[RMDB]
RNA sequence: GGGAACGACUCGAGUAGAGUCGAAAAGAUAUGGAGUGGUAGCGAGCCUGGGCAUCGGAAACGAUGCCGAGGCGAUGAGCUACGUAACAUCUCCUAAGUCAAAGCCCGCGUCUUCGGACGCGGGCAACAUUCAAAUAGCCUUCGGGCUAUUUGAAUGAAAAGAAACAACAACAACAAC
Reactivity to 2A3 in 0.01 (KOAc 150mM, MgCl2 10mM, bicine 150mM(pH8.5), 24C), signal-to-noise 1, nucleotides 027 to 126: g010a010u040a020u080g000g000a000g010u010g000g000u000a010g000c010g010a020g000c050c020u030g090g050g000c000a020u000c070g000g020a020a010a000c010g000a000u000g010c010c010g010a000g010g000c010g000a050u070g020a010g000c000u000a010c010g030u030a110a030c020a180u140c000u000c030c010u010a030a010g000u030c060a150a030a100g030c060c000c000g080c000g000u030c030u080u190c300g110g020a010c000g040c040g060g000g000c000a000a000
Reactivity to DMS in 0.01 (KOAc 150mM, MgCl2 10mM, bicine 150mM(pH8.5), 24C), signal-to-noise 2, nucleotides 027 to 126: g000a030u000a080u000g000g000a000g040u000g000g000u000a010g000c000g010a080g010c000c000u000g000g000g030c000a010u000c000g020g000a030a010a050c000g000a000u000g000c000c010g000a020g020g020c000g020a040u020g000a100g020c000u000a010c000g010u000a080a170c110a020u000c010u000c010c000u000a020a150g000u000c000a080a110a110g030c000c010c010g030c000g020u010c000u000u000c250g030g000a010c000g010c000g010g010g010c020a000a000
The record gives the reactivity of an RNA of 177 nucleotides to 2A3 and DMS. Values cover nucleotides 27 to 126. For DMS, 2,666 sequencing reads were counted.